[RMDB]
RNA sequence: GGGAACGACUCGAGUAGAGUCGAAAAGAUAUGGAUUAUGCUGGGACAUGAAGACCUAUCGGAAACGAUAGGCUUCAACAGCCCAGGCAUAAUCCUAAGUCAAAACUCAGCUCUUCGGAGCUGAGAAGUCUAGUUAUAAGUUCGCUUAUAACUAGACAAAAGAAACAACAACAACAAC
Reactivity to 2A3 in 0.01 (KOAc 150mM, MgCl2 10mM, bicine 150mM(pH8.5), 24C), signal-to-noise 7, nucleotides 027 to 126: g030a010u060a040u140g000g000a010u010u010a000u010g000c000u010g000g020g020a090c080a260u160g030a050a030g300a300c000c000u010a000u000c000g030g010a090a030a010c010g000a000u010a000g010g000c010u000u010c010a000a000c040a030g150c000c000c010a030g130g070c010a000u000a000a000u000c010c000u000a070a010g030u000c030a020a050a050a210c000u000c000a000g000c010u000c010u060u210c300g190g000a010g000c010u010g000a000g000a010a010
Reactivity to DMS in 0.01 (KOAc 150mM, MgCl2 10mM, bicine 150mM(pH8.5), 24C), signal-to-noise 6, nucleotides 027 to 126: g010a060u010a300u000g010g010a000u000u000a010u000g010c000u000g000g010g010a070c130a300u000g010a020a000g000a170c000c000u000a000u000c000g010g010a140a080a210c000g010a010u000a000g000g000c010u000u000c000a030a060c250a230g000c000c010c000a030g000g000c000a000u000a010a000u000c000c000u000a020a080g000u000c040a100a080a130a200c000u000c000a000g010c000u000c000u000u010c260g010g000a010g010c000u000g000a010g000a040a060
Chemical mapping of a 177-nucleotide RNA with 2A3 and DMS.
Conditions: 150 mM KOAc, 10 mM MgCl2 and 150 mM bicine (pH 8.5), 24 C.
Values cover nucleotides 27 to 126.
2A3 adducts were read by reverse transcription with SuperScript II with manganese.
The data come from the RNA Mapping Database (RMDB), library TTRDES.